[RMDB]
Source information
The data come from the RNA Mapping Database (RMDB), library OK3TST. The record gives the reactivity of an RNA of 207 nucleotides to 2A3. The 2A3 profile rests on 696 reads.
RNA sequence: GGGAACGACUCGAGUAGAGUCGAAAAUCACUGGGCGAUCACCGGCCGCGAGUCGUCGCCGUUCACCUGGCUCGAACUGUUGGAGUUCAUCGGCGACGGUGCCCGCGACGGGCUCGGGUGGCGCACGAUCCGCUACGCGACCGGCUGGGCCUCGCCGCCGGUACCGCUAAUUCGUUAGCGGUACCGGAAAAGAAACAACAACAACAAC
Reactivity to 2A3 in 0.01 (KOAc 150mM, MgCl2 10mM, bicine 150mM(pH8.5), 24C), signal-to-noise 1, nucleotides 027 to 156: u120c030a010c090u130g130g000g000c020g010a050u040c050a000c030c040g000g000c000c000g020c070g030a030g040u050c000g000u020c020g000c050c020g030u130u130c010a010c040c010u040g040g000c000u040c090g230a240a060c140u160g120u160u300g110g010a100g040u200u180c050a010u040c020g000g000c040g030a060c010g010g040u020g000c000c000c000g090c030g150a110c140g000g000g000c000u040c080g050g000g000u000g010g010c000g000c010a080c080g060a120u080c000c010g020c050u020a040c040g090c000g060a010c000c020g000g040c030u070g010g010g060c030c000u000c000g000c000c000g020